The record gives the reactivity of an RNA of 177 nucleotides to 2A3 and DMS. The DMS profile rests on 10,067 reads. DMS adducts were read by reverse transcription with MarathonRT. For 2A3 the reverse transcriptase was SuperScript II with manganese. Reactivities are given for positions 27 through 126. The reactions ran in a buffer of 150 mM KOAc, 10 mM MgCl2 and 150 mM bicine (pH 8.5), at 24 C.

RNA sequence: GGGAACGACUCGAGUAGAGUCGAAAAACUGCCAUGGUACACGAUCGAUCUAGUACCAUGCCAUGUGAUCGUACGAUCUGCUGCUAGUACCAGCUACAUGGUACACUAGAUGAUCUGAGUGGAUCCGCUAUGCGAUGAGUUUCGACUCAUCGCAUAGAAAAGAAACAACAACAACAAC
Reactivity to 2A3 in 0.01 (KOAc 150mM, MgCl2 10mM, bicine 150mM(pH8.5), 24C), signal-to-noise 4, nucleotides 027 to 126: a000c070u140g040c040c010a080u120g030g020u080a030c020a010c070g010a020u040c030g080a010u010c070u030a000g010u020a050c010c030a010u030g000c010c010a070u090g050u070g020a030u030c050g090u270a080c240g020a020u010c020u050g030c000u010g010c000u020a030g020u070a070c020c010a010g000c010u010a010c010a020u020g010g000u010a030c020a010c050u010a010g010a020u030g000a000u030c030u070g070a050g040u040g040g000a100u030c010c020g000
Reactivity to DMS in 0.01 (KOAc 150mM, MgCl2 10mM, bicine 150mM(pH8.5), 24C), signal-to-noise 8, nucleotides 027 to 126: a100c180u000g010c100c030a060u000g010g020u010a090c050a070c140g010a030u000c030g000a040u000c010u000a050g010u000a080c100c130a160u000g010c040c030a030u000g000u000g010a020u000c030g010u010a120c210g010a010u000c000u000g010c010u000g000c020u010a140g000u000a130c300c010a010g000c040u010a050c040a020u000g010g000u000a040c230a050c060u000a010g000a030u000g000a020u000c010u000g010a150g020u000g000g000a080u000c020c080g010